[RMDB]
RNA sequence: GGGAACGACUCGAGUAGAGUCGAAAAGAGGAAGCCGAUGUUCCGUCGUACGUUUUGAAAAACGAACCAGGGAGUGUGUCUGAUUGGCGAGUCUAACCUGAUUAUCAGGGAAGGCGUAGGGAAACCGGAUAAGGGAUAGCUUCGGCUAUCCCUUAUCAAAAGAAACAACAACAACAAC
Reactivity to DMS in 0.01 (KOAc 150mM, MgCl2 10mM, bicine 150mM(pH8.5), 24C), signal-to-noise 2, nucleotides 027 to 126: g000a160g010g000a080a150g020c050c050g010a080u000g030u000u000c020c020g030u000c160g040u020a060c050g000u000u000u000u000g020a060a060a130a050a020c000g000a060a060c050c100a110g000g000g030a060g010u010g020u000g000u000c040u020g030a100u000u000g040g000c020g010a170g020u000c020u010a040a300c030c000u000g010a160u000u010a130u000c010a040g010g000g010a200a040g000g020c020g000u000a080g010g000g010a060a070a080c100c070g010